[RMDB]
RNA sequence: GGGAACGACUCGAGUAGAGUCGAAAAAGAGGACGAGGUGGGCUGGCACGCGGGCGAUGGCCGGAAGGCCACGGGCGGCAACGAGACGACGCUCUCCAUCGAGAUCAUCAUGGACGGCACGGGCAGCAAGGAAGACCGCAAGGCUGAGGAGAACGGCGCUCUUAAUAUGGUUCGCCAUAUUAAGAGCAAAAGAAACAACAACAACAAC
Reactivity to 2A3 in 0.01 (KOAc 150mM, MgCl2 10mM, bicine 150mM(pH8.5), 24C), signal-to-noise 1, nucleotides 027 to 156: a020g050a030g010g030a000c040g000a000g020g130u140g010g100g000c170u100g060g000c040a020c120g090c050g030g010g000c080g030a150u050g020g010c010c000g050g020a120a080g020g000c000c010a050c040g020g020g020c060g010g000c030a060a050c090g000a040g010a060c090g010a030c020g000c010u110c000u050c030c020a080u060c090g020a070g020a200u170c030a080u020c020a030u080g070g020a030c040g040g000c070a030c010g000g000g000c040a010g020c030a050a000g030g030a030a020g050a080c000c030g020c010a030a000g060g000c020u020g020a040g000g010a040g050a060a000c000g050g050c030